Source: RMDB library RSTRND, as collected in RNAgym. Structure probing data (2A3) for a 207-nucleotide construct. The reactions ran in a buffer of 150 mM KOAc, 10 mM MgCl2 and 150 mM bicine (pH 8.5), at 24 C.
[RMDB]
RNA sequence: GGGAACGACUCGAGUAGAGUCGAAAAGGCUUCGCCUGUGGGCCGAGGCAGGACGUCAUACAGCAGGCUGGUUCCUUCGGCUGGGUCUGGGCCGCGGGGAUGAGAUCCACGGACUAGCAUUCUGCGUAUCUUGUCGCUUCUAAGCGCAGAGUGCGAACUUAGACUUUUUGUUCGCAAAAAGUCUAAGAAAAGAAACAACAACAACAAC
Reactivity to 2A3 in 0.01 (KOAc 150mM, MgCl2 10mM, bicine 150mM(pH8.5), 24C), signal-to-noise 4, nucleotides 027 to 156: g010g000c000u020u060c090g010c000c010u000g000u020g000g010g000c010c020g010a080g000g040c090a090g140g190a100c100g040u080c030a080u090a190c050a060g000c010a000g020g000c000u010g030g010u000u010c010c000u000u020c000g000g000c000u000g000g000g020u000c000u000g000g000g000c000c000g010c020g000g000g000g000a010u020g020a010g010a050u160c150c110a060c070g000g000a000c000u010a020g010c000a000u000u010c010u010g000c000g020u070a160u090c080u080u160g130u150c120g080c160u170u050c080u190a110a060g010c000g000c000a000g000a000g010u000g000c010g000a010a000
High 2A3 reactivity points to a flexible backbone, as in loops and unpaired stretches.